[RMDB]
The data come from the RNA Mapping Database (RMDB), library OK3TST.
The record gives the reactivity of an RNA of 207 nucleotides to 2A3 and DMS.
The RNA was probed in 150 mM KOAc, 10 mM MgCl2 and 150 mM bicine (pH 8.5) at 24 C.
2A3 adducts were read by reverse transcription with SuperScript II with manganese.
RNA sequence: GGGAACGACUCGAGUAGAGUCGAAAAAGGUAAUCACCAUUGACGGUCUCCUGACGGCUGACGUUCUGAUUUAUGAUAUUGAGGACGCGAUGAACCACUACGACGUUCGCUCUGAGUAUACCUCUCAGUUGGGUGAAUCUCUGGCGAUGGCUGCGGAUGAGCAUGGAAAAUUCGUUUUCCAUGCUCAAAAAGAAACAACAACAACAAC
Reactivity to 2A3 in 0.01 (KOAc 150mM, MgCl2 10mM, bicine 150mM(pH8.5), 24C), signal-to-noise 2, nucleotides 027 to 156: a010g080g010u110a080a050u060c060a030c030c000a040u020u060g090a070c050g030g000u030c030u030c100c000u020g060a030c040g020g010c020u050g050a090c030g030u050u000c030u060g150a120u040u080u060a210u190g190a100u060a040u180u140g090a060g000g000a010c010g000c040g060a030u090g050a040a050c010c020a060c050u100a020c060g070a040c030g060u040u030c020g020c030u030c020u050g020a010g000u030a010u060a080c010c000u040c010u020c080a080g030u130u120g000g000g000u050g050a150a150u030c030u000c000u040g010g000c000g030a020u020g070g000c010u040g030c020g040g000a050
Reactivity to DMS in 0.01 (KOAc 150mM, MgCl2 10mM, bicine 150mM(pH8.5), 24C), signal-to-noise 2, nucleotides 027 to 156: a030g000g000u000a050a080u000c030a070c020c040a120u000u020g050a110c040g020g030u000c010u000c060c030u000g000a120c050g000g050c040u000g050a080c010g020u000u000c010u010g000a100u000u000u000a100u010g030a130u000a100u000u000g010a090g000g020a040c020g020c010g000a140u000g010a080a100c010c030a080c050u000a100c000g010a110c070g020u000u000c080g050c020u000c030u000g020a090g040u000a160u000a190c100c050u010c000u000c030a110g020u000u000g000g020g000u000g000a070a110u000c030u000c040u030g020g000c030g010a050u010g020g010c050u000g020c010g000g020a220